[RMDB]
RNA sequence: GGGAACGACUCGAGUAGAGUCGAAAAGAUAUGGACAGGAGACAUGCUCCCUCUCGGAAACGAGAGGCGAGCAACAGCUCCGUCCUAAGUCAAAACGUGAUCGAGAAGUUCGCUUCUCGAUCACGAAGUUUCGAGUACAGUUCGCUGUACUCGAAACAAAAGAAACAACAACAACAAC
Reactivity to DMS in 0.01 (KOAc 150mM, MgCl2 10mM, bicine 150mM(pH8.5), 24C), signal-to-noise 1, nucleotides 027 to 126: g000a000u000a300u020g000g020a020c010a160g040g000a040g020a050c010a200u000g000c000u000c000c000c010u000c000u000c020g020g010a100a080a220c000g010a030g010a010g050g000c160g010a010g000c020a000a030c200a090g000c000u010c000c010g000u000c000c010u010a020a080g010u000c030a050a040a110a170c020g000u000g000a010u000c050g010a000g000a010a000g000u000u010c250g020c010u020u000c000u000c000g000a000u000c000a010c020g000a010a060
Reactivity to 2A3 in 0.01 (KOAc 150mM, MgCl2 10mM, bicine 150mM(pH8.5), 24C), signal-to-noise 1, nucleotides 027 to 126: g020a020u040a020u140g020g040a030c210a250g080g010a030g010a020c050a070u060g020c010u010c010c000c000u000c000u000c020g020g040a130a100a060c010g000a000g010a000g000g020c030g000a000g040c010a010a010c010a010g050c000u000c000c000g000u010c000c010u010a090a010g060u000c020a000a020a060a170c020g000u010g000a000u000c000g010a000g000a000a010g040u070u190c300g040c100u020u020c000u000c010g000a000u010c000a000c000g000a010a010
This 177-nucleotide RNA was probed chemically with DMS and 2A3.
Conditions: 150 mM KOAc, 10 mM MgCl2 and 150 mM bicine (pH 8.5), 24 C.
DMS adducts were read by reverse transcription with MarathonRT.